[RMDB]
RNA sequence: GGGAACGACUCGAGUAGAGUCGAAAAGAGUUUACGCUGGGAUCAAUUAACGACGUCUCUGGAGCCUACUGAAGCGCGCACGGUAGGCUAUGAAGGAGACGAGAACGUUAUGAUCCUGUGCUGAAGCGCGCACGGCAACCGAAAGGUGCGGUCAAAAUCUAGGUAAAGAGUUCGCUCUUUACCUAGAAAAAGAAACAACAACAACAAC
Reactivity to DMS in 0.01 (KOAc 150mM, MgCl2 10mM, bicine 150mM(pH8.5), 24C), signal-to-noise 1, nucleotides 027 to 156: g020a190g030u000u000u000a030c040g050c000u000g010g010g020a030u000c020a050a050u030u010a020a070c000g020a180c000g030u000c000u000c010u000g010g010a010g010c010c000u010a020c000u000g000a030a000g070c030g030c020g000c020a300c010g010g020u000a020g030g040c000u000a010u000g030a250a300g000g000a070g000a020c000g000a020g000a080a090c000g010u010u000a070u010g000a020u000c000c000u040g030u000g000c000u000g000a070a050g010c000g050c000g000c030a300c040g040g000c020a020a020c010c000g020a090a090a090g000g030u000g030c000g000g020u010c120a100a060a120a160
Reactivity to 2A3 in 0.01 (KOAc 150mM, MgCl2 10mM, bicine 150mM(pH8.5), 24C), signal-to-noise 2, nucleotides 027 to 156: g070a010g000u060u090u070a030c000g010c000u020g000g000g000a010u000c010a030a150u120u130a060a000c010g300a200c000g010u000c000u000c000u000g010g000a000g000c010c000u030a010c000u030g050a220a040g000c000g000c000g000c000a010c010g000g020u000a010g000g000c000u030a140u010g000a000a000g010g000a000g000a000c030g000a020g000a020a020c010g000u010u000a000u000g000a000u010c010c000u000g010u000g020c010u010g010a140a050g010c000g000c020g010c000a000c030g010g000c000a010a000c000c000g040a030a050a050g000g000u000g000c000g000g000u000c000a040a060a030a040
Chemical mapping of a 207-nucleotide RNA with DMS and 2A3. For DMS, 3,653 sequencing reads were counted.